This 207-nucleotide RNA was probed chemically with 2A3. For 2A3, 3,201 sequencing reads were counted. The reactions ran in a buffer of 150 mM KOAc, 10 mM MgCl2 and 150 mM bicine (pH 8.5), at 24 C.
[RMDB]
RNA sequence: GGGAACGACUCGAGUAGAGUCGAAAAAGCGAUGAUACGUCAUCGCAACGAUUGCCUGAUCGUAAAACAGGAGACGGCCGUGGCCGCGACCACGUAAAAAAGCGUUACGUGGUCUACGGACCACGAAAAAAGCGCGGAACGUUCGCGUUCCGCGCAAGAUCCAUAAUUACUUCGGUAAUUAUGGAUCAAAAGAAACAACAACAACAAC
Reactivity to 2A3 in 0.01 (KOAc 150mM, MgCl2 10mM, bicine 150mM(pH8.5), 24C), signal-to-noise 3, nucleotides 027 to 156: a000g010c000g000a010u010g010a010u030a080c200g080u020c010a010u000c000g000c010a000a030c010g000a000u000u040g010c000c000u020g010a010u010c040g160u220a010a020a010a000c000a010g010g010a020g080a050c180g160g050c110c000g010u000g000g010c010c000g010c010g000a000c010c000a000c010g010u010a010a000a020a020a030a000g170c050g020u020u010a000c000g010u000g000g000u000c010u020a040c020g020g030a180c000c000a010c000g030a020a010a000a000a010a000g000c020g000c000g010g010a000a000c000g040u090u110c130g020c010g100u010u000c010c010g000c020g000c000a010a000
Overview
For 2A3 the reverse transcriptase was SuperScript II with manganese. Source: RMDB library M2RFPK, as collected in RNAgym.